[RMDB]
RNA sequence: GGGAACGACUCGAGUAGAGUCGAAAAGAAGGAGGAGAUAUAUAGUUGUGAUACAUAAGCACAGCUAUUGCAGACCUCGCCUGUGUCUGCAAUGCCUGGUGAAUAGUUAGGUAUAAUACCACAGGGACUACAGGUAACUAUUCGUAGUUACCUGUAGAAAAGAAACAACAACAACAAC
Reactivity to DMS in 0.01 (KOAc 150mM, MgCl2 10mM, bicine 150mM(pH8.5), 24C), signal-to-noise 9, nucleotides 027 to 126: g010a110a080g010g010a030g000g010a100g010a130u010a090u010a040u000a010g010u000u000g020u000g010a050u010a130c250a120u010a080a110g010c010a010c000a010g010c010u000a000u000u000g000c090a090g000a050c010c030u000c120g010c040c020u000g010u000g000u000c040u000g000c080a070a030u000g010c040c010u000g000g010u000g000a110a060u010a100g010u000u000a020g010g010u000a030u010a050a110u000a110c130c040a040c030a030g010g000g010a280
Reactivity to 2A3 in 0.01 (KOAc 150mM, MgCl2 10mM, bicine 150mM(pH8.5), 24C), signal-to-noise 9, nucleotides 027 to 126: g080a030a030g080g040a020g040g050a070g030a040u080a010u020a000u010a180g010u000u010g010u010g020a030u060a190c110a110u250a170a060g020c000a000c000a010g000c000u010a010u010u020g000c000a010g000a070c000c010u010c040g160c010c000u020g010u020g000u020c020u020g010c010a010a020u020g010c000c000u010g010g010u050g020a050a030u090a080g020u010u010a000g000g020u020a050u030a100a090u080a070c020c030a010c020a020g010g000g030a010